This 207-nucleotide RNA was probed chemically with 2A3. It was measured as part of the RMDB library OK3TST. The reactions ran in a buffer of 150 mM KOAc, 10 mM MgCl2 and 150 mM bicine (pH 8.5), at 24 C.
RNA sequence: GGGAACGACUCGAGUAGAGUCGAAAAAAGGAGGACAUCGAGACGAUCGGCGCCGUGAAGCGCUUUUCGGACGCGUACGCGGCCAUCAACUACGUCAACCUCACGCCGGGCAACGUGGCCGAGCUGGCGCAGUUUUACAUGGCCAACCUGGUGCUGCCCUUAGUGGGGUUUUCGAACCCCACUAAGGAAAAGAAACAACAACAACAAC
Reactivity to 2A3 in 0.01 (KOAc 150mM, MgCl2 10mM, bicine 150mM(pH8.5), 24C), signal-to-noise 1, nucleotides 027 to 156: a000a000g050g030a010g010g000a000c030a110u100c090g030a050g030a020c050g000a010u080c100g040g040c020g000c010c040g070u040g060a150a040g010c030g000c000u130u090u090u090c100g030g000a010c040g030c000g070u090a030c020g000c030g060g000c010c000a030u130c030a000a050c010u110a040c020g000u040c040a000a060c020c040u020c000a020c030g020c000c000g010g000g030c040a000a020c090g090u050g010g000c000c020g000a060g000c000u000g110g050c050g000c010a010g000u000u000u020u150a050c020a050u170g000g030c000c000a010a010c070c000u000g030g070u040g020c060u030g000c030